[RMDB]
RNA sequence: GGGAACGACUCGAGUAGAGUCGAAAAGAGAAGAAGAGGCUAGGUGGUAUUCCGGUGUGGGAUACUUGGUAAUAUGUAACGCUAAUUGCAUAAGAUUGUAGGACGGAAUUUACAGUCUUGGUUUUUAAAAACUUCUCGUAGUUCGCUACGAGAAGAACAACAAAAAGUAGUUCGCUACUUUUUGUUGAAAAGAAACAACAACAACAAC
Reactivity to DMS in 0.01 (KOAc 150mM, MgCl2 10mM, bicine 150mM(pH8.5), 24C), signal-to-noise 2, nucleotides 027 to 156: g000a120g000a100a060g010a110a070g030a060g010g020c040u000a040g030g050u000g020g070u000a100u000u010c040c020g000g090u010g060u010g070g010g010a090u000a040c030u020u010g020g040u000a070a110u000a060u000g020u010a040a070c060g000c030u000a070a110u000u020g020c000a100u010a060a050g010a030u000u000g010u000a030g030g000a210c010g000g030a120a300u000u000u000a050c040a050g020u000c010u010u000g010g000u010u000u020u020u000a030a030a100a110a080c010u000u000c000u000c000g020u000a030g020u000u000c300g040c000u000a020c010g000a050g020a010a010g010a030a080
Reactivity to 2A3 in 0.01 (KOAc 150mM, MgCl2 10mM, bicine 150mM(pH8.5), 24C), signal-to-noise 6, nucleotides 027 to 156: g000a000g010a070a010g010a010a010g030a010g030g000c050u070a030g020g040u040g020g020u060a070u060u040c050c040g090g050u120g040u110g080g030g000a020u030a060c010u030u080g020g010u060a070a050u070a090u180g060u060a050a010c040g020c140u080a090a050u130u080g010c020a040u020a110a020g010a030u030u050g020u040a020g010g050a010c080g030g040a050a040u070u070u050a040c020a020g010u010c000u010u040g040g020u040u020u010u080u170a080a140a020a030a040c000u000u000c000u000c000g000u000a000g010u030u060c180g000c120u000a000c000g000a000g000a000a000g000a000a010
The record gives the reactivity of an RNA of 207 nucleotides to DMS and 2A3.
For DMS, 4,371 sequencing reads were counted.
The 2A3 profile rests on 6,150 reads.
The reactions ran in a buffer of 150 mM KOAc, 10 mM MgCl2 and 150 mM bicine (pH 8.5), at 24 C.
For 2A3 the reverse transcriptase was SuperScript II with manganese.
Reactivities are rounded to 0.1 and cut off at 0 and 3.
DMS adducts were read by reverse transcription with MarathonRT.